This 177-nucleotide RNA was probed chemically with 2A3 and DMS. The DMS profile rests on 3,249 reads.

[RMDB]
RNA sequence: GGGAACGACUCGAGUAGAGUCGAAAAUCUAGUUGACAGCACUAUCGCUAGUGGGAGUAGACUGUACCUUAAGCGAUCACUAGGAACUGCCAAUUCCUUCACGCCCACCUCCAUCCAGUCGUUGAAGACUAUGGGGUAGGUUCGCCUACCCCAUAGUAAAAGAAACAACAACAACAAC
Reactivity to 2A3 in 0.01 (KOAc 150mM, MgCl2 10mM, bicine 150mM(pH8.5), 24C), signal-to-noise 2, nucleotides 027 to 126: u030c040u020a010g020u060u080g050a010c030a050g090c030a040c120u100a040u140c040g020c130u030a030g050u040g030g030g000a050g060u100a030g060a070c020u110g080u110a140c010c000u040u160a050a010g000c000g050a050u030c010a010c070u060a030g030g030a030a040c030u040g010c040c040a020a010u020u010c000c000u020u080c030a020c070g010c010c010c000a010c020c000u010c010c000a030u000c000c000a030g000u000c010g050u040u090g100a150a040g050
Reactivity to DMS in 0.01 (KOAc 150mM, MgCl2 10mM, bicine 150mM(pH8.5), 24C), signal-to-noise 4, nucleotides 027 to 126: u010c030u010a040g010u000u010g020a060c110a080g000c090a080c110u010a110u000c040g020c030u000a090g020u010g020g010g010a210g010u010a070g010a090c060u000g010u000a090c040c040u010u000a110a100g000c050g010a070u020c100a040c070u000a030g010g010a060a080c070u000g020c040c060a060a210u000u000c030c000u010u010c100a080c140g010c050c010c020a110c030c030u010c010c010a070u000c050c080a040g000u000c070g000u000u000g010a110a090g020
It was measured as part of the RMDB library OK2TST. Values are in units of 0.01, from 0 to 300, in steps of 10. 2A3 adducts were read by reverse transcription with SuperScript II with manganese.